[RMDB]
Annotation:
Conditions: 150 mM KOAc, 10 mM MgCl2 and 150 mM bicine (pH 8.5), 24 C. Chemical mapping of a 170-nucleotide RNA with DMS and 2A3.
RNA sequence: GGGAACGACUCGAGUAGAGUCGAAAAACUGUUGAAGAUCUGCGUGCUCGCAUGACAUAUGUAUGCCAGUGUGGUGGUGAACGUCAUCGGCAAUUAGUCGAACACACCACCCCCUGGUUGCUGCUCUAGGACUCCUCGUUCGCGAGGAGUAAAAGAAACAACAACAACAAC
Reactivity to DMS in 0.01 (KOAc 150mM, MgCl2 10mM, bicine 150mM(pH8.5), 24C), signal-to-noise 3, nucleotides 027 to 129: a030c090u010g030u000u000g020a120a100g000a000u020c050u010g000c090g050u030g050c120u030c070g030c000a070u060g070a070c090a140u100a000u000g060u040a020u010g040c100c000a080g030u030g000u060g040g020u050g010g060u060g040a100a090c230g030u020c240a140u010c020g010g030c030a000a000u030u050a130g040u030c030g050a030a070c040a040c030a050c010c050a060c000c000c020c080c010u000g050g000u000u050g010c000u010g000c120u010c000u040a070g010g000
Reactivity to 2A3 in 0.01 (KOAc 150mM, MgCl2 10mM, bicine 150mM(pH8.5), 24C), signal-to-noise 4, nucleotides 027 to 129: a000c060u040g050u020u090g080a080a050g030a210u000c000u060g010c020g000u110g110c090u050c170g010c040a010u220g010a000c000a000u180a020u120g090u010a030u190g030c000c000a000g050u010g030u040g240g000u000g000g000u000g000a160a030c150g000u090c070a120u040c020g000g010c000a090a230u150u040a090g000u040c010g000a000a000c000a020c000a000c000c000a000c030c000c010c000c000u000g000g020u000u020g000c000u010g000c010u030c050u000a040g010g080

2A3 is a SHAPE reagent: it acylates the 2'-hydroxyl of flexible nucleotides of all four kinds. The DMS profile rests on 9,134 reads. Values cover nucleotides 27 to 129.